[RMDB]
RNA sequence: GGGAACGACUCGAGUAGAGUCGAAAACAGAUCACGGCAUUCAGCCUCUGAAAAAUAGCUUAACCGGAGUACAAAGAGUGACUCUCACGGACGAUCGAAGGAGAUCCUGCCCUUACAUUUACAAAACUCUUGCGACAGUGACUCCUAAGGUCCUGUCACUUCCAGUGGUUUUCGAACCACUGGAAGUAAAAGAAACAACAACAACAAC
Reactivity to 2A3 in 0.01 (KOAc 150mM, MgCl2 10mM, bicine 150mM(pH8.5), 24C), signal-to-noise 2, nucleotides 027 to 156: c050a010g050a040u130c010a040c100g010g000c020a060u110u140c070a120g020c030c010u030c060u030g110a050a020a070a060a040u110a020g040c030u130u050a060a060c060c030g050g010a030g050u080a040c120a040a060a040g100a100g040u050g010a030c010u000c010u050c090a080c050g070g020a000c050g050a050u050c080g010a100a030g050g020a050g000a010u030c000c000u030g010c020c000c040u040u050a120c080a220u150u200u110a060c070a020a130a060a100c030u020c000u050u100g070c030g020a000c000a000g030u070g220a000c030u110c060c050u090a080a070g020g000u020c000c010u030g000u030c030
The record gives the reactivity of an RNA of 207 nucleotides to 2A3. Conditions: 150 mM KOAc, 10 mM MgCl2 and 150 mM bicine (pH 8.5), 24 C. Source: RMDB library OK3TST, as collected in RNAgym. Reactivities are given for positions 27 through 156.